[RMDB]
RNA sequence: GGGAACGACUCGAGUAGAGUCGAAAACAAAACUGACCAUCUAUGAGGUCAUACAUCGUCAUAGAAAAACAAAACAAAACUGACCAGAUAUGAGGUCAUACAUCGUCAUAACAAACAAAACAACAAACAUAGUCCCGGUAUUCGUACCGGGACUAUGAAAAGAAACAACAACAACAAC
Reactivity to DMS in 0.01 (KOAc 150mM, MgCl2 10mM, bicine 150mM(pH8.5), 24C), signal-to-noise 2, nucleotides 027 to 126: c030a030a000a080a170c170u000g010a000c000c000a000u000c030u000a000u000g000a000g000g000u000c000a260u050a180c040a050u030c280g050u000c000a030u000a000g000a020a090a040a240a140c160a070a000a120a180c280a160a290a140a000c210u000g000a020c000c000a140g000a040u030a000u000g040a200g080g000u010c000a130u000a020c110a090u030c080g000u000c040a070u030a090a110c210a060a110a010c070a070a000a050a170c070a000a040c300a000a100a150
Reactivity to 2A3 in 0.01 (KOAc 150mM, MgCl2 10mM, bicine 150mM(pH8.5), 24C), signal-to-noise 2, nucleotides 027 to 126: c070a010a150a000a070c060u050g000a000c000c000a000u030c000u000a030u000g000a000g000g000u000c060a030u170a100c220a130u260c070g030u000c000a000u000a000g100a020a000a000a000a000c040a030a000a000a000c040a000a000a090a100c030u030g000a060c000c000a130g000a000u080a060u150g160a190g010g000u060c000a000u030a000c030a080u070c030g250u060c000a060u030a200a080c150a150a040a000c000a000a060a070a130c140a020a000c000a140a060a040
Structure probing data (DMS and 2A3) for a 177-nucleotide construct. The RNA was probed in 150 mM KOAc, 10 mM MgCl2 and 150 mM bicine (pH 8.5) at 24 C. The DMS profile rests on 1,020 reads. Values cover nucleotides 27 to 126.